[RMDB]
RNA sequence: GGGAACGACUCGAGUAGAGUCGAAAAUGACAAUCAUCGAUCCUGACAGCACUUUUAUUGGUCCAGACGUUACAAUUGGUAGUGAUACAGUCAUUGAACCAGGCGUACGAAUUAAUGGUCGUACAGAGGUAGCCAGCGUUUUCGAACGCUGGCUACCAAAAGAAACAACAACAACAAC
Reactivity to 2A3 in 0.01 (KOAc 150mM, MgCl2 10mM, bicine 150mM(pH8.5), 24C), signal-to-noise 1, nucleotides 027 to 126: u010g000a000c000a000a080u110c030a010u110c040g030a060u020c040c000u030g050a080c040a080g180c040a130c070u230u200u000u000a110u220u300g020g000u150c070c000a000g000a040c000g010u190u020a030c060a150a000u130u090g100g000u180a080g060u000g030a000u060a040c000a070g090u000c000a000u000u000g000a080a000c000c000a000g000g000c070g000u010a000c000g000a030a030u280u100a050a090u210g100g080u000c000g000u000a000c000a000g260a040